[RMDB]
RNA sequence: GGGAACGACUCGAGUAGAGUCGAAAAGAUAUGGAAGCUUGAGGUGUCAGGAUAACCUUGGAUUUAGCUCUCGGAAACGAGAGCUUGUCAGGCUAAUACUGACACUACCCACCAAGCUUCCUAAGUCAAAACGGUCGUGACUUCGGUCACGACCGAACUCUACUAUCAUGUUCGCAUGAUAGUAGAGAAAAGAAACAACAACAACAAC
Reactivity to DMS in 0.01 (KOAc 150mM, MgCl2 10mM, bicine 150mM(pH8.5), 24C), signal-to-noise 2, nucleotides 027 to 156: g000a130u000a210u010g020g000a000a010g040c030u010u000g000a070g050g020u000g000u000c010a010g010g010a130u000a040a010c020c000u000u020g070g000a060u000u000u000a030g040c000u000c000u020c030g010g020a120a130a300c020g030a020g020a010g010c010u010u000g000u000c010a030g000g030c000u000a120a160u000a040c020u010g010a010c000a020c010u000a000c010c010c030a300c140c000a000a060g000c000u010u000c000c010u000a030a040g000u000c030a060a120a120a210c060g000g020u000c030g070u000g030a030c020u000u000c280g090g000u000c020a030c030g000a020c000c000g010a000a020
Reactivity to 2A3 in 0.01 (KOAc 150mM, MgCl2 10mM, bicine 150mM(pH8.5), 24C), signal-to-noise 4, nucleotides 027 to 156: g020a040u100a050u220g000g000a000a000g010c000u000u010g010a010g020g010u010g000u000c000a010g010g000a030u010a030a020c000c010u090u140g140g010a070u300u200u130a000g000c000u000c000u000c000g020g020a070a050a020c010g000a000g010a000g010c010u000u010g000u000c000a000g000g000c010u030a030a010u140a220c010u010g000a000c000a000c000u000a000c000c010c010a030c020c000a000a000g000c000u010u000c000c000u010a050a010g010u020c050a010a030a090a130c000g000g010u000c000g000u000g020a000c000u070u060c290g040g000u000c000a000c000g000a000c000c000g000a010a020